[RMDB]
RNA sequence: GGGAACGACUCGAGUAGAGUCGAAAAAGGAUGGAAGCCUAGCUUGGUCACUACCAGUGUGCACAUGUGUGUAGACUAGUCAAGCAUCGUUGAUACAAGCUGCUCUUGGUCACCGGAGGGCCUUCGGGAAGUACAUCAGGUUCGCCUGAUGUACUUCAAAAGAAACAACAACAACAAC
Reactivity to 2A3 in 0.01 (KOAc 150mM, MgCl2 10mM, bicine 150mM(pH8.5), 24C), signal-to-noise 3, nucleotides 027 to 126: a000g070g010a040u130g020g040a000a050g030c020c040u020a010g020c000u020u060g010g020u080c020a020c040u080a060c020c020a000g020u020g080u030g100c020a020c020a120u300g250u060g010u000g010u270a020g030a050c000u000a000g010u050c070a070a010g110c010a040u100c070g070u050u050g030a020u130a220c010a020a020g010c020u050g010c000u020c040u090u080g010g000u010c010a010c080c030g010g050a050g070g050g000c060c010u000u030c010g080g010
Reactivity to DMS in 0.01 (KOAc 150mM, MgCl2 10mM, bicine 150mM(pH8.5), 24C), signal-to-noise 3, nucleotides 027 to 126: a100g000g020a090u010g010g010a050a090g000c010c070u000a080g010c030u000u010g020g010u010c060a090c150u010a080c070c020a050g020u000g010u000g010c020a010c020a200u000g010u010g010u000g010u000a030g010a030c010u000a040g020u000c170a060a080g030c140a200u000c100g000u000u010g010a030u010a080c030a030a030g020c150u010g000c100u010c030u000u010g010g000u000c040a090c050c010g000g000a130g010g000g000c040c050u000u000c030g000g010

An RNA of 177 nucleotides, treated with 2A3 and DMS and read out base by base. For DMS, 2,506 sequencing reads were counted. It was measured as part of the RMDB library RFMREP. The reactions ran in a buffer of 150 mM KOAc, 10 mM MgCl2 and 150 mM bicine (pH 8.5), at 24 C.